RNA sequence: GGGAACGACUCGAGUAGAGUCGAAAAAUGAUCACCCCGUCCGAUGCGGAAGUUCGUGCUUCCGUCGAACGCGAAAGUCGGACGGCGGCCAUGAGUCGCAACGCAAAGCCGCGGCAAGUAGAGUUAGAAAAGCGUUUGAAGUUCGCUUCAAACGCAACUAUACCUUGCUGUUCGCAGCAAGGUAUAGAAAAGAAACAACAACAACAAC
Reactivity to 2A3 in 0.01 (KOAc 150mM, MgCl2 10mM, bicine 150mM(pH8.5), 24C), signal-to-noise 4, nucleotides 027 to 156: a000u100g000a040u120c040a060c010c000c000c000g000u000c000c000g010a000u050g000c010g010g030a000a010g010u180u300c200g150u300g040c000u010u000c010c000g000u000c010g080a090a050c060g020c010g120a110a010a020g000u000c000g010g000a000c020g010g000c050g000g000c020c020a120u110g050a050g080u030c020g000c030a070a060c060g030c160a090a110a050g020c080c050g010c050g040g000c060a060a020g040u150a010g040a030g000u140u100a030g080a080a110a030a020g000c000g000u000u000u000g000a020a000g000u030u100c180g050c050u000u000c000a000a000a000c000g000c000a000a000
Reactivity to DMS in 0.01 (KOAc 150mM, MgCl2 10mM, bicine 150mM(pH8.5), 24C), signal-to-noise 2, nucleotides 027 to 156: a110u000g000a180u010c090a120c000c000c000c000g000u000c020c000g010a030u000g010c000g010g010a040a060g020u000u010c230g040u020g010c010u000u000c020c010g030u000c060g010a140a110c090g030c110g010a090a150a130g000u000c050g000g000a050c000g000g000c020g020g000c000c020a100u020g000a140g020u000c010g020c000a080a100c040g020c030a070a190a300g020c010c020g060c000g020g000c030a080a150g010u000a110g010a160g000u000u010a110g010a020a070a130a150g000c000g010u000u000u000g000a050a010g020u000u040c270g010c000u000u000c000a000a020a020c040g000c000a010a010